[RMDB]
RNA sequence: GGGAACGACUCGAGUAGAGUCGAAAACUCGGCCCCCACUACUGCGUAAAUCUUAUGGCAGUUCCAGUCUACCAAACGCAAAGCGUCAAAAAUCACUUGUCCUCUGGUGAUGGUAUCUAAGGGGUCGGUGCCCACCGGAGGAAAUAGGUCAAAUGGGACAGUCCAGUAUGUUCGCAUACUGGACUGUAAAAGAAACAACAACAACAAC
Reactivity to 2A3 in 0.01 (KOAc 150mM, MgCl2 10mM, bicine 150mM(pH8.5), 24C), signal-to-noise 1, nucleotides 027 to 156: c090u090c090g010g100c000c000c010c000c000a040c060u040a050c010u090g020c020g060u080a060a110a110u110c050u140u170a030u110g130g000c040a000g010u040u020c020c000a030g010u000c040u020a090c030c010a000a000a120c000g000c040a140a080a080g000c050g080u040c060a010a030a040a110a180u140c060a080c040u090u140g040u040c000c000u030c000u000g000g000u040g030a090u120g010g010u000a030u010c040u070a000a030g000g000g000g040u000c000g000g010u010g000c010c000c000a000c040c000g020g000a000g020g000a000a040a000u010a000g000g010u040c010a000a000a260u130g050g020g050
Structure probing data (2A3) for a 207-nucleotide construct. For 2A3 the reverse transcriptase was SuperScript II with manganese. It was measured as part of the RMDB library OK3TST.